[RMDB]
RNA sequence: GGGAACGACUCGAGUAGAGUCGAAAAACAACACGCUUCGGCGUGUUGUCGACGGAGGAAGCUGAGGACGCGCUUGUGCCGCAGCAGCGAAGCGCAGCGUAAAUCAGAGGUGAUUCGUCACCUCUAAUUCAUAAUCUUCCUUCGGGAAGAUUAUGAAAAAAGAAACAACAACAACAAC
Reactivity to DMS in 0.01 (KOAc 150mM, MgCl2 10mM, bicine 150mM(pH8.5), 24C), signal-to-noise 6, nucleotides 027 to 126: a040c010a010a010c010a000c000g010c000u000u020c200g040g000c000g020u000g010u000u000g000u000c030g020a080c070g000g000a040g010g010a110a100g010c040u000g010a060g000g010a210c160g000c030g010c020u000u010g020u000g010c030c040g010c060a110g010c150a090g000c020g000a080a060g000c040g020c010a040g010c040g010u000a060a110a100u000c100a030g000a020g000g000u010g010a050u000u010c140g010u000c000a050c000c010u010c010u000a010a060
Reactivity to 2A3 in 0.01 (KOAc 150mM, MgCl2 10mM, bicine 150mM(pH8.5), 24C), signal-to-noise 3, nucleotides 027 to 126: a000c000a000a000c000a000c010g000c010u000u080c220g140g000c000g030u010g000u000u000g000u000c010g020a030c030g010g030a040g050g040a080a020g000c030u040g030a040g050g020a020c070g020c010g020c030u100u120g040u040g020c010c010g000c040a080g060c060a030g010c050g050a130a010g030c010g000c010a020g000c020g050u080a040a030a060u110c040a020g010a010g010g030u040g010a030u040u050c140g040u000c060a000c000c020u000c000u010a000a040